[RMDB]
RNA sequence: GGGAACGACUCGAGUAGAGUCGAAAAAGAAAACGGCAGCAGCCAAAGGUGUUGGAGACGCUGUGUUUAUUCAAAGUGCAACGGCGGUGACCAAUAGUUGAAGGCCACGCCGUAGAAAUUGCAAGCAAUUUACCCGGUGAUUCGUCACCGGGUAAAUAAAAGAAACAACAACAACAAC
Reactivity to DMS in 0.01 (KOAc 150mM, MgCl2 10mM, bicine 150mM(pH8.5), 24C), signal-to-noise 3, nucleotides 027 to 126: a100g000a060a060a030a040c050g000g010c000a080g020c140a140g000c000c020a020a130a220g000g020u020g020u010u010g020g010a260g010a160c120g010c010u000g010u010g010u000u020u010a070u040u020c230a060a060a090g010u000g020c050a050a050c020g000g010c000g000g030u020g000a090c000c000a000a110u010a050g000u030u000g010a090a190g010g000c020c040a130c040g000c000c000g020u000a030g010a040a100a110u030u000g030c100a110a170g000c300a060
Reactivity to 2A3 in 0.01 (KOAc 150mM, MgCl2 10mM, bicine 150mM(pH8.5), 24C), signal-to-noise 2, nucleotides 027 to 126: a000g130a000a050a000a000c060g120g000c010a020g000c010a010g000c050c000a000a140a000g210g010u200g070u070u060g060g010a110g000a070c080g070c010u010g000u000g040u070u040u000a200u030u060c110a100a110a050g080u060g030c010a030a020c000g000g000c030g030g080u050g030a050c010c000a060a000u050a070g090u020u090g080a190a080g010g010c010c000a010c050g000c000c000g000u010a000g030a000a140a030u120u100g020c030a000a050g000c050a070
Source: RMDB library OK1LIB, as collected in RNAgym. Structure probing data (DMS and 2A3) for a 177-nucleotide construct. For 2A3, 1,227 sequencing reads were counted. For DMS, 4,277 sequencing reads were counted.